[RMDB]
RNA sequence: GGGAACGACUCGAGUAGAGUCGAAAAAUAAACUCCGAAUGCCAACGAGAUAUAAUCGGCAGUCAGACUGCGAGUGCUAAGAUCCGUAGUCGAAAGGGAAACAGCCCAGACCACCAGCUAAGGUCCCUGUAUUCAAAGCUUUCGAGCUUUGAAUACAAAAAGAAACAACAACAACAAC
Reactivity to 2A3 in 0.01 (KOAc 150mM, MgCl2 10mM, bicine 150mM(pH8.5), 24C), signal-to-noise 1, nucleotides 027 to 126: a000u110a020a070a000c000u000c020c020g040a090a010u080g030c030c020a050a000c040g050a060g060a160u120a000u040a250a080u040c040g070g040c000a010g040u030c040a040g000a010c010u050g010c020g100a150g070u070g040c170u170a210a030g050a180u080c000c000g010u020a010g020u010c000g010a100a000a000g060g020g000a060a080a000c010a070g040c010c020c000a000g050a050c010c010a030c000c020a000g000c050u040a090a050g000g040u010c040c000c000
Reactivity to DMS in 0.01 (KOAc 150mM, MgCl2 10mM, bicine 150mM(pH8.5), 24C), signal-to-noise 2, nucleotides 027 to 126: a110u000a020a130a140c080u000c010c000g020a070a040u000g010c030c020a060a080c080g000a160g020a110u020a080u010a050a070u000c140g010g000c050a060g000u000c140a080g020a100c030u000g020c020g010a100g010u000g000c180u000a070a110g000a040u000c000c000g000u020a010g010u000c000g010a030a110a080g020g000g000a060a050a080c100a080g010c020c010c050a070g010a110c020c020a060c050c040a110g000c010u010a050a160g000g000u000c000c010c020